[RMDB]
RNA sequence: GGGAACGACUCGAGUAGAGUCGAAAAGAUAUGGACUUGGGACGCUGGGAUUCAACGGAUCGGAAACGAUCCGCGCAUUUCCCAGAACUACGUCAUAAGUCCUAAGUCAAACUGCGCUUCGGCGCAGGGAGUACACCUAGUUCGCUAGGUGUACUCCAAAAGAAACAACAACAACAAC
Reactivity to DMS in 0.01 (KOAc 150mM, MgCl2 10mM, bicine 150mM(pH8.5), 24C), signal-to-noise 3, nucleotides 027 to 126: g010a040u010a300u000g000g000a010c000u000u000g000g010g010a020c020g040c000u000g040g000g030a040u000u020c180a190a050c000g010g010a010u010c000g010g010a130a130a270c020g000a030u000c000c000g000c050g000c260a300u000u000u000c000c000c000a000g000a090a050c140u000a290c030g000u000c010a060u000a020a020g000u000c000c010u010a030a070g000u000c030a100a150a300c010u000g000c000g030c010u000u010c240g040g000c000g010c000a000g000
Reactivity to 2A3 in 0.01 (KOAc 150mM, MgCl2 10mM, bicine 150mM(pH8.5), 24C), signal-to-noise 3, nucleotides 027 to 126: g040a020u120a080u210g020g000a000c000u010u010g080g040g000a000c020g000c020u010g000g000g020a020u060u050c080a100a020c030g020g000a010u010c000g000g040a070a090a070c010g000a000u000c020c000g010c000g000c010a060u080u060u030c000c010c000a020g000a010a040c090u170a070c020g020u020c030a050u040a050a000g000u000c000c000u030a170a000g020u010c040a070a080a110c000u010g000c000g010c010u070u100c300g210g000c010g000c010a000g020